This 177-nucleotide RNA was probed chemically with DMS and 2A3. For 2A3 the reverse transcriptase was SuperScript II with manganese. For DMS, 823 sequencing reads were counted. For 2A3, 1,898 sequencing reads were counted. The RNA was probed in 150 mM KOAc, 10 mM MgCl2 and 150 mM bicine (pH 8.5) at 24 C.
[RMDB]
RNA sequence: GGGAACGACUCGAGUAGAGUCGAAAAGAUAUGGAAUGUGACAGCUACCCACCAGCGAGUUCGGAAACGAACUCCGCUGAGGCCACAUUCCUAAGUCAAAACCUUCUGCCGUUCGCGGCAGAAGGAAGGUUGACAGUAAGUUCGCUUACUGUCAACCAAAAGAAACAACAACAACAAC
Reactivity to DMS in 0.01 (KOAc 150mM, MgCl2 10mM, bicine 150mM(pH8.5), 24C), signal-to-noise 1, nucleotides 027 to 126: g000a110u010a160u000g000g000a000a020u000g020u010g010a110c040a190g000c170u000a090c070c020c020a300c080c020a010g000c000g010a020g000u000u000c010g000g000a060a050a040c000g000a000a000c000u000c230c160g040c000u010g020a130g020g020c000c010a000c000a000u000u000c010c000u000a010a090g000u000c130a080a030a120a120c000c010u020u000c000u000g010c000c000g030u000u010c220g040c020g000g010c010a000g010a010a000g000g000a000a010
Reactivity to 2A3 in 0.01 (KOAc 150mM, MgCl2 10mM, bicine 150mM(pH8.5), 24C), signal-to-noise 2, nucleotides 027 to 126: g020a010u250a140u300g000g000a010a000u010g020u020g070a140c180a270g030c050u140a300c060c070c040a100c030c000a020g020c000g000a000g010u000u000c000g000g030a070a030a020c030g000a020a010c020u070c010c130g010c020u010g000a000g010g000c000c000a000c000a000u000u040c010c020u010a070a000g110u190c020a010a070a140a300c010c000u000u020c010u010g000c010c000g050u090u150c300g020c000g160g020c000a000g000a000a000g000g020a010a000